[RMDB]
RNA sequence: GGGAACGACUCGAGUAGAGUCGAAAACUUGUUACAGGAGAAGUGUCCGGUUCGAUCCCUGCGUGGGUUAUCCACGGCGGAAGCGGCUUGAGUAAUCAGCCUUCGACCGCCAGCUAACAAGCAGGCUCGUUAAAUGGGGAUUCGUCCCCAUUUAACGAAAAGAAACAACAACAACAAC
Reactivity to DMS in 0.01 (KOAc 150mM, MgCl2 10mM, bicine 150mM(pH8.5), 24C), signal-to-noise 4, nucleotides 027 to 126: c020u000u020g020u000u020a060c120a140g020g000a060g010a110a100g000u000g000u000c060c040g030g000u000u010c070g000a130u010c080c000c040u010g030c040g020u000g030g000g010u000u020a050u050c030c020a120c070g000g010c030g000g010a080a180g000c300g000g000c020u020u080g000a020g000u040a140a090u040c060a050g000c020c010u010u040c060g000a300c020c020g010c020c000a070g000c100u000a040a010c090a050a070g020c050a060g000g010c240u010
Reactivity to 2A3 in 0.01 (KOAc 150mM, MgCl2 10mM, bicine 150mM(pH8.5), 24C), signal-to-noise 5, nucleotides 027 to 126: c010u050u060g040u080u120a070c080a060g010g120a090g040a140a100g090u070g060u150c000c020g030g040u040u120c030g040a070u050c000c000c000u000g000c020g000u070g030g100g010u110u070a060u150c010c020a060c010g010g010c000g020g020a050a020g020c030g020g000c050u210u240g000a020g020u080a090a140u050c000a010g020c000c000u100u160c020g030a050c000c000g000c000c000a010g000c020u020a030a030c020a050a010g030c010a000g040g020c010u000
The data come from the RNA Mapping Database (RMDB), libraries RFM100 and RFMREP. Chemical mapping of a 177-nucleotide RNA with DMS and 2A3. For DMS the reverse transcriptase was MarathonRT. Reactivities are rounded to 0.1 and cut off at 0 and 3. The reactions ran in a buffer of 150 mM KOAc, 10 mM MgCl2 and 150 mM bicine (pH 8.5), at 24 C. Values cover nucleotides 27 to 126.